This 177-nucleotide RNA was probed chemically with DMS and 2A3. 2A3 adducts were read by reverse transcription with SuperScript II with manganese. Source: RMDB library OK1LIB, as collected in RNAgym. DMS (dimethyl sulfate) methylates the pairing face of unpaired adenines and cytosines. The 2A3 profile rests on 25,384 reads. DMS adducts were read by reverse transcription with MarathonRT.

[RMDB]
RNA sequence: GGGAACGACUCGAGUAGAGUCGAAAAGCACAAUGGGAGGAAGCCUGAUGCAGCGCGGCAGCGUGAGGGAUGAAGGCCUUCGGGUUGUAAACCUCCUUCAGCAGGGACGAUGCGUGAGUCGCGGUACAAUUAUAAAGUUAUUCGUAACUUUAUAAUUAAAAGAAACAACAACAACAAC
Reactivity to DMS in 0.01 (KOAc 150mM, MgCl2 10mM, bicine 150mM(pH8.5), 24C), signal-to-noise 9, nucleotides 027 to 126: g010c070a090c110a090a060u020g010g010g010a060g000g000a090a090g010c030c010u010g000a090u020g010c070a080g010c050g010c040g000g010c080a110g010c070g010u020g010a050g000g000g000a040u030g010a200a300g000g000c040c010u000u040c130g020g000g020u000u010g000u000a020a300a260c020c000u000c000c060u010u010c080a080g010c040a060g000g000g000a060c070g000a080u010g000c040g010u010g000a100g010u000c020g010c030g000g010u020a060c140
Reactivity to 2A3 in 0.01 (KOAc 150mM, MgCl2 10mM, bicine 150mM(pH8.5), 24C), signal-to-noise 9, nucleotides 027 to 126: g020c010a010c030a070a110u110g020g010g000a040g000g020a050a010g040c000c010u030g020a050u080g020c020a030g030c020g000c000g050g000c020a030g010c020g080u110g020a020g010g010g000a020u300g020a040a000g010g010c000c000u010u030c080g040g000g000u000u030g010u020a000a000a000c000c000u010c000c040u030u030c020a040g000c010a010g030g000g020a010c020g040a050u080g010c030g010u050g020a050g020u030c000g000c000g010g010u050a030c040